About this RNA
The record gives the reactivity of an RNA of 207 nucleotides to 2A3. Conditions: 150 mM KOAc, 10 mM MgCl2 and 150 mM bicine (pH 8.5), 24 C. Source: RMDB library M2RFOK, as collected in RNAgym. The 2A3 profile rests on 578 reads.
RNA sequence: GGGAACGACUCGAGUAGAGUCGAAAACAAGUUCGUGCUUGCGACUUACACGUAGGGUGAGGGGUGGGCGAAAGUUGCCAUGAGACCGUAACUUUCGUAGUCAUUGAUAAAGGGGCAGGUCUCGCUCAAAACCUCCCGUGGUUCGCCACGGGAGGAACUACCUGCAUUGCUUCGGCAAUGCAGGUAGAAAAGAAACAACAACAACAAC
Reactivity to 2A3 in 0.01 (KOAc 150mM, MgCl2 10mM, bicine 150mM(pH8.5), 24C), signal-to-noise 1, nucleotides 027 to 156: c020a000a000g040u140u110c030g020u130g040c080u020u180g010c040g120a050c050u040u100a060c050a000c060g030u040a010g020g000g110u160g060a100g000g040g080g040u210g000g020g000c000g000a000a000a000g000u000u000g020c040c100a140u080g040a000g000a000c000c010g000u010a000a000c000u100u000u000c020g010u070a010g110u020c110a150u020u120g070a030u120a090a100a000g000g000g000g000c040a010g000g020u000c000u010c010g010c010u080c040a100a210a090a150c020c000u030c000c000c000g000u000g000g040u040u050c180g030c030c000a000c010g010g000g000a000g000g000a000a000